[RMDB]
RNA sequence: GGGAACGACUCGAGUAGAGUCGAAAAGCGUACUACACUUCCCUCUAGCGAAGAACUUUCGCAGUGAAAGCCAUAUCCCAAAUAGGAUAUGGCGAGCGAAAGGGAGCUAGAGUGAAGUGUAUCGCAAAAUGCCAUUGAUCUUCGGAUCAAUGGCAAACAAUCAUAAAACCUUCGGGUUUUAUGAUUGAAAAGAAACAACAACAACAAC
Reactivity to 2A3 in 0.01 (KOAc 150mM, MgCl2 10mM, bicine 150mM(pH8.5), 24C), signal-to-noise 3, nucleotides 027 to 156: g020c010g020u100a080c050u000a010c030a000c020u000u000c010c050c000u000c000u010a010g010c010g230a300a010g010a070a060c010u000u010u020c020g010c010a070g050u160g300a180a050a010g000c010c010a000u000a010u010c010c020c050a190a300a120u270a110g020g000a000u010a000u010g020g000c000g000a000g000c000g000a000a000a010g010g000g000a010g000c010u000a000g010a010g000u000g000a000a010g000u000g000u000a020u020c000g010c000a020a090a030a040u100g000c000c000a000u010u000g000a010u000c010u050u050c250g130g000a010u000c000a000a000u000g000g000c010a010a000a000
Reactivity to DMS in 0.01 (KOAc 150mM, MgCl2 10mM, bicine 150mM(pH8.5), 24C), signal-to-noise 2, nucleotides 027 to 156: g010c030g000u020a080c070u000a000c000a030c030u000u000c000c050c000u000c000u000a000g020c010g000a130a210g020a150a190c000u000u000u000c000g020c000a230g010u000g020a170a130a270g000c010c000a010u000a030u020c000c000c010a060a170a240u020a100g000g000a010u020a000u000g020g000c000g010a030g000c010g010a010a020a020g020g010g000a230g050c020u000a000g000a030g040u010g000a010a050g010u000g010u000a000u000c000g070c010a060a060a070a130u010g020c000c000a030u000u020g000a010u000c030u010u010c300g040g000a000u000c010a000a000u000g010g000c000a000a010a070
An RNA of 207 nucleotides, treated with 2A3 and DMS and read out base by base. DMS adducts were read by reverse transcription with MarathonRT. 2A3 adducts were read by reverse transcription with SuperScript II with manganese. For DMS, 3,391 sequencing reads were counted. The 2A3 profile rests on 2,210 reads. The RNA was probed in 150 mM KOAc, 10 mM MgCl2 and 150 mM bicine (pH 8.5) at 24 C. Reactivities are given for positions 27 through 156.